RNA sequence: GGGAACGACUCGAGUAGAGUCGAAAAUAACAGGAGAGUAGAUGAUUCGCGUUAAGUGUGUGUGAAUGGGAUGUCGUCACACAACGAAGCGAGAGCGCGGUGAAUCAUUGCUUCCGCUCCAAAACAAUAUAACAACGUCGUUCGCGACGUUGUUAUAAAAAGAAACAACAACAACAAC
Reactivity to DMS in 0.01 (KOAc 150mM, MgCl2 10mM, bicine 150mM(pH8.5), 24C), signal-to-noise 1, nucleotides 027 to 126: u000a130a190c240a200g030g000a000g000a020g010u010a220g000a000u020g000a010u000u000c020g000c030g000u000u010a040a090g020u020g010u010g000u010g000u010g010a000a010u000g000g010g000a050u000g000u000c130g020u000c000a000c000a010c020a000a000c100g000a040a090g020c010g000a190g010a090g000c020g000c030g000g000u000g000a010a010u000c000a020u000u000g000c020u000u000c000c000g000c060u030c010c000a040a070a020a120c260a110a130

Conditions: 150 mM KOAc, 10 mM MgCl2 and 150 mM bicine (pH 8.5), 24 C. An RNA of 177 nucleotides, treated with DMS and read out base by base. For DMS the reverse transcriptase was MarathonRT. Values are in units of 0.01, from 0 to 300, in steps of 10. It was measured as part of the RMDB library M2PK90.